Structure probing data (2A3 and DMS) for a 177-nucleotide construct. Conditions: 150 mM KOAc, 10 mM MgCl2 and 150 mM bicine (pH 8.5), 24 C. The 2A3 profile rests on 1,619 reads. DMS adducts were read by reverse transcription with MarathonRT.
RNA sequence: GGGAACGACUCGAGUAGAGUCGAAAAUAUGAAACUGAGCUCCAGAGCCAGCCAAUCACUUAGCUCCUCAUAACAAGUCUAACUGGCUCUGGAAAGCUGAAAGGGCUGCACUGGAACAACACAGAUGGCUUAGCUAGUACUUCGGUACUAGCUAAGCAAAAGAAACAACAACAACAAC
Reactivity to 2A3 in 0.01 (KOAc 150mM, MgCl2 10mM, bicine 150mM(pH8.5), 24C), signal-to-noise 2, nucleotides 027 to 126: u300a030u090g040a000a000a110c020u020g010a000g000c000u000c010c000a000g000a000g000c000c000a000g040c030c010a110a110u160c040a010c050u040u030a020g000c000u020c130c000u060c010a170u110a270a060c110a090a070g080u030c020u020a000a000c010u010g000g000c000u000c010u000g000g000a000a000a000g000c000u030g060a100a000a000g000g000g000c040u040g000c060a000c050u040g030g030a100a000c020a010a000c030a050c010a110g030a080u110g130
Reactivity to DMS in 0.01 (KOAc 150mM, MgCl2 10mM, bicine 150mM(pH8.5), 24C), signal-to-noise 2, nucleotides 027 to 126: u070a080u030g000a150a090a050c040u040g000a030g000c000u000c000c020a000g050a010g010c010c000a020g010c000c060a100a150u050c300a010c010u000u000a110g040c030u020c060c100u020c130a030u000a160a160c150a060a020g000u010c090u050a200a300c010u000g010g000c020u000c000u010g000g000a000a010a030g000c020u030g000a070a080a080g040g030g000c000u020g000c030a030c040u000g000g010a120a010c110a010a090c110a070c060a070g010a040u010g030
2A3 adducts were read by reverse transcription with SuperScript II with manganese. Reactivities are given for positions 27 through 126.